[RMDB]
Chemical mapping of a 170-nucleotide RNA with DMS and 2A3. The DMS profile rests on 31,691 reads. The RNA was probed in 150 mM KOAc, 10 mM MgCl2 and 150 mM bicine (pH 8.5) at 24 C. Source: RMDB library 15KLIB, as collected in RNAgym.
RNA sequence: GGGAACGACUCGAGUAGAGUCGAAAACCCUGGCCUUGGGUUUCCUCCCAGGUCCGAAAUCAACCUCCAUGGUUUCCUGCCUGGGCCUCUUCGCCGGGGGCGCUCCGUCUUCGUUCUUCUUCCUUCUGCAGAUGGUUCUUCGGAACCAUCAAAAGAAACAACAACAACAAC
Reactivity to DMS in 0.01 (KOAc 150mM, MgCl2 10mM, bicine 150mM(pH8.5), 24C), signal-to-noise 7, nucleotides 027 to 129: c020c000c040u020g030g030c000c010u020u020g050g050g000u030u030u030c090c120u030c000c020c010a000g020g040u000c090c220g000a000a000a000u040c080a070a180c070c020u030c050c040a130u000g010g000u050u000u020c020c040u030g050c030c040u000g000g000g000c090c010u040c040u000u000c150g040c120c080g040g020g010g020g020c070g040c050u010c010c010g000u020c040u010u020c040g050u020u020c000u030u020c060u030u030c020c040u030u040c010u040g020c190a100
Reactivity to 2A3 in 0.01 (KOAc 150mM, MgCl2 10mM, bicine 150mM(pH8.5), 24C), signal-to-noise 8, nucleotides 027 to 129: c010c000c000u000g030g020c020c030u040u140g020g000g050u050u100u080c020c010u040c010c000c000a000g010g000u010c000c050g040a030a010a010u070c030a030a180c010c030u090c050c040a060u040g010g000u020u010u020c010c030u020g030c000c000u000g010g030g000c010c010u070c000u070u050c020g030c030c020g010g010g000g000g000c020g010c000u020c010c010g070u000c030u020u040c010g040u030u020c000u050u000c000u020u030c030c000u040u050c010u040g040c010a030